[RMDB]
RNA sequence: GGGAACGACUCGAGUAGAGUCGAAAACAAACAAACAAAACAACAAGUGCUGAAAUAAACUCGCUGUAAGGGAUGACGGAAAGAAAACCAAGUCAUUCCAAAACGGCACAAAACAGCGAAAACAAAAGGUCAUAGGAUAUUUCGAUAUCCUAUGACCAAAAGAAACAACAACAACAAC
Reactivity to DMS in 0.01 (KOAc 150mM, MgCl2 10mM, bicine 150mM(pH8.5), 24C), signal-to-noise 2, nucleotides 027 to 126: c040a040a030a080c200a050a050a060c100a150a040a170a060c240a130a200c230a140a080g000u020g040c010u000g000a040a110a030u010a020a000a220c100u000c010g000c030u000g010u000a120a220g000g000g000a000u000g040a000c000g000g000a020a080a060g000a210a090a040a100c000c080a050a130g000u000c000a000u000u020c000c000a000a050a030a020c000g000g000c000a090c130a130a060a250a070c000a000g010c000g020a040a050a090a080c170a020a010a100a050
Reactivity to 2A3 in 0.01 (KOAc 150mM, MgCl2 10mM, bicine 150mM(pH8.5), 24C), signal-to-noise 3, nucleotides 027 to 126: c090a030a030a000c050a080a120a020c030a060a060a080a020c100a050a000c060a180a050g040u010g080c020u060g060a080a150a040u230a060a240a000c030u010c100g000c010u020g000u030a030a040g000g000g000a010u000g000a000c030g080g100a180a100a060g260a080a090a020a000c070c000a050a050g000u000c000a000u000u010c000c040a000a010a010a000c040g020g000c020a000c040a020a050a000a000c000a000g000c000g090a030a000a050a030c150a010a140a010a000
Chemical mapping of a 177-nucleotide RNA with DMS and 2A3. It was measured as part of the RMDB library OK1LIB. For DMS, 2,479 sequencing reads were counted. DMS adducts were read by reverse transcription with MarathonRT. The RNA was probed in 150 mM KOAc, 10 mM MgCl2 and 150 mM bicine (pH 8.5) at 24 C.